[RMDB]
RNA sequence: GGGAACGACUCGAGUAGAGUCGAAAAGCCCUGGCCGCUUAAGGUCCAGGACUCACACUAGCCUGUUCAUGGGCUAGGCCGGGUCAAACCGGCAGUGAGUUAAUUCACAUGAAAUCGCGCUUGUCCGGGUCGCUUGGGCAGGUGCUAAAUCCAAGGCCAUACGUCAUCCGUUCGCGGAUGACGUAUGAAAAGAAACAACAACAACAAC
Reactivity to 2A3 in 0.01 (KOAc 150mM, MgCl2 10mM, bicine 150mM(pH8.5), 24C), signal-to-noise 3, nucleotides 027 to 156: g030c030c010c000u020g010g000c040c000g060c200u300u250a170a100g010g000u070c030c000a030g000g020a020c000u000c000a010c000a010c000u000a000g000c000c000u010g020u070u030c030a040u070g000g010g000c000u000a000g000g000c000c000g020g000g010u120c030a070a080a060c010c000g000g010c020a000g010u010g000a000g010u010u030a080a160u170u150c140a030c010a050u020g020a000a070a000u030c020g000c000g000c010u020u000g000u000c030c020g040g050g090u210c080g050c190u150u160g010g010g000c000a000g000g000u010g000c000u000a000a010a010u060c130c080a090a080g050g000c010